[RMDB]
RNA sequence: GGGAACGACUCGAGUAGAGUCGAAAAUCACCUGCCGUCGUCGACGAAGGCUGCUGAGUCGAUCCCGUGAGGAGCGUGGCUGGAUAGCCUCCGAGACGAGCGAUGGACAGAAAGCCUCCUGCUUUCCGCAAAUAGCAGUGUUCGCACUGCUAUUUGCAAAAGAAACAACAACAACAAC
Reactivity to DMS in 0.01 (KOAc 150mM, MgCl2 10mM, bicine 150mM(pH8.5), 24C), signal-to-noise 1, nucleotides 027 to 126: u030c090a170c070c010u000g020c060c000g000u000c080g000u000c060g000a200c030g000a020a090g010g000c010u010g010c030u000g000a060g000u010c000g000a050u010c020c010c010g050u000g010a140g010g000a050g000c180g010u000g000g030c040u020g030g020a080u010a010g000c030c000u010c000c000g010a290g000a090c040g020a110g000c040g000a090u010g020g030a080c140a120g010a080a100a090g000c030c110u000c090c040u010g000c040u000u000u000c060c120
Reactivity to 2A3 in 0.01 (KOAc 150mM, MgCl2 10mM, bicine 150mM(pH8.5), 24C), signal-to-noise 1, nucleotides 027 to 126: u080c000a040c050c000u040g030c000c140g000u050c030g030u010c020g010a090c010g070a050a040g040g020c010u010g020c010u170g120a020g020u050c000g060a010u000c000c020c020g090u120g000a190g000g010a010g020c180g000u190g060g000c050u000g000g040a090u030a060g000c000c000u060c000c000g060a050g060a050c050g000a010g060c030g020a010u110g020g020a050c060a070g070a040a040a030g080c020c050u060c000c010u040g020c030u070u020u010c030c030
The data come from the RNA Mapping Database (RMDB), library VIROID. Chemical mapping of a 177-nucleotide RNA with DMS and 2A3. Reactivities are given for positions 27 through 126. Conditions: 150 mM KOAc, 10 mM MgCl2 and 150 mM bicine (pH 8.5), 24 C.